An RNA of 177 nucleotides, treated with DMS and 2A3 and read out base by base.
It was measured as part of the RMDB library OK1LIB.
For DMS, 17,632 sequencing reads were counted.
Values cover nucleotides 27 to 126.
Conditions: 150 mM KOAc, 10 mM MgCl2 and 150 mM bicine (pH 8.5), 24 C.
DMS adducts were read by reverse transcription with MarathonRT.
For 2A3 the reverse transcriptase was SuperScript II with manganese.
RNA sequence: GGGAACGACUCGAGUAGAGUCGAAAAGAGUUGACAGGCAGCUUCGUCGACCUGUCAGUCGGUGCCACUCCUAUUAGCGCAAAGGCUAGCGACAGCACCGGCUCCGGGCCGGGCGAGCGGCUAUGAGCCGCGUAGCAUCCUUCGGGAUGUUACGCGGAAAAGAAACAACAACAACAAC
Reactivity to DMS in 0.01 (KOAc 150mM, MgCl2 10mM, bicine 150mM(pH8.5), 24C), signal-to-noise 7, nucleotides 027 to 126: g000a090g000u020u000g010a080c050a050g000g000c040a080g000c010u010u020c060g030u000c000g000a080c010c000u000g000u000c110a010g010u010c020g010g000u000g000c010c080a180c270u000c020c060u020a120u040u020a030g010c010g030c180a130a150a120g010g000c010u010a020g000c260g010a050c300a240g000c010a030c000c010g000g000c010u020c140c030g010g010g020c010c010g010g010g020c000g010a040g000c020g000g010c010u000a040u000g000a210g010
Reactivity to 2A3 in 0.01 (KOAc 150mM, MgCl2 10mM, bicine 150mM(pH8.5), 24C), signal-to-noise 9, nucleotides 027 to 126: g080a010g030u060u050g040a030c030a030g020g020c010a010g000c030u150u100c040g030u010c000g010a060c000c000u000g020u030c030a000g000u000c010g000g000u010g000c010c030a060c060u040c010c010u100a130u240u120a070g020c050g040c190a170a100a040g210g000c010u010a010g010c020g080a020c020a020g000c010a010c000c000g000g000c000u000c000c000g010g000g000c010c000g090g010g020c010g010a010g000c010g010g000c010u060a110u150g050a010g020